The record gives the reactivity of an RNA of 177 nucleotides to DMS and 2A3.

[RMDB]
RNA sequence: GGGAACGACUCGAGUAGAGUCGAAAACGGCCCUCAACGAGGAAGCGACCAUCGAAUCGGUGAUCGACAGCAUCUCUCCGCUGGUCGAUGGCCUGGUCGAUGAAUUGAUCGUGCUGGACUCCGGUUCCCCUCCUUCUCAGUUCGCUGAGAAGGAGGGAAAAGAAACAACAACAACAAC
Reactivity to DMS in 0.01 (KOAc 150mM, MgCl2 10mM, bicine 150mM(pH8.5), 24C), signal-to-noise 2, nucleotides 027 to 126: c120g010g010c090c000c000u000c050a140a110c100g010a060g030g010a110a080g000c030g000a060c070c000a000u000c030g000a070a060u020c300g020g010u000g020a010u010c030g010a030c010a000g010c000a170u000c130u010c110u010c120c080g000c000u010g020g010u000c000g000a000u010g000g020c000c000u000g030g000u000c000g010a030u010g000a100a170u010u010g000a120u000c020g000u000g030c020u000g010g010a220c060u000c040c040g020g010u000u000c020
Reactivity to 2A3 in 0.01 (KOAc 150mM, MgCl2 10mM, bicine 150mM(pH8.5), 24C), signal-to-noise 3, nucleotides 027 to 126: c000g040g010c000c010c010u030c020a110a120c080g030a020g090g020a060a060g030c000g030a030c040c000a010u040c020g050a110a080u090c040g000g000u090g120a020u000c020g000a000c000a010g000c000a130u030c080u090c040u040c240c080g010c010u080g080g250u050c010g010a010u020g050g010c000c030u080g030g010u010c020g010a000u010g040a020a170u100u130g080a150u050c040g020u070g040c040u050g020g080a050c050u030c030c010g080g000u070u110c010

For 2A3 the reverse transcriptase was SuperScript II with manganese.
The reactions ran in a buffer of 150 mM KOAc, 10 mM MgCl2 and 150 mM bicine (pH 8.5), at 24 C.
Reactivities are given for positions 27 through 126.